[RMDB]
RNA sequence: GGGAACGACUCGAGUAGAGUCGAAAAUCGUGUCAGAGGCACAGGUGAUGGAAACCAUGAAGCGCAUGGCAGCCAUCGUCGACAAGCAGAACGAAGGCGACCCGCUUUAUCGCCCGAUGGCCGCUGAGCUCAUGAGUGACUUCGGUCACUCAUGAGCAAAAGAAACAACAACAACAAC
Reactivity to DMS in 0.01 (KOAc 150mM, MgCl2 10mM, bicine 150mM(pH8.5), 24C), signal-to-noise 2, nucleotides 027 to 126: u010c060g000u000g020u010c050a060g010a080g020g000c050a030c050a130g000g000u000g000a150u010g010g000a030a080a120c090c070a030u000g010a070a010g000c060g060c150a070u060g030g020c200a180g000c010c000a100u000c000g000u020c030g000a140c200a040a200g000c120a110g040a080a040c030g000a040a010g040g020c000g000a220c070c040c030g010c030u000u010u000a110u000c050g010c010c080c030g000a040u010g000g020c020c010g000c000u010g000a100
Reactivity to 2A3 in 0.01 (KOAc 150mM, MgCl2 10mM, bicine 150mM(pH8.5), 24C), signal-to-noise 1, nucleotides 027 to 126: u020c000g030u020g080u040c020a010g000a060g010g020c030a070c020a020g000g040u050g060a090u110g000g150a070a000a070c030c000a050u110g000a120a000g040c000g000c130a080u080g070g050c030a000g020c000c000a040u000c000g010u010c030g020a060c060a110a040g130c050a040g000a120a000c040g000a000a050g000g000c000g000a060c000c000c100g000c000u080u040u050a120u110c000g020c060c000c030g040a070u160g010g050c000c010g000c020u020g010a030
An RNA of 177 nucleotides, treated with DMS and 2A3 and read out base by base. The RNA was probed in 150 mM KOAc, 10 mM MgCl2 and 150 mM bicine (pH 8.5) at 24 C. It was measured as part of the RMDB library OK2TST. The 2A3 profile rests on 1,089 reads. DMS adducts were read by reverse transcription with MarathonRT.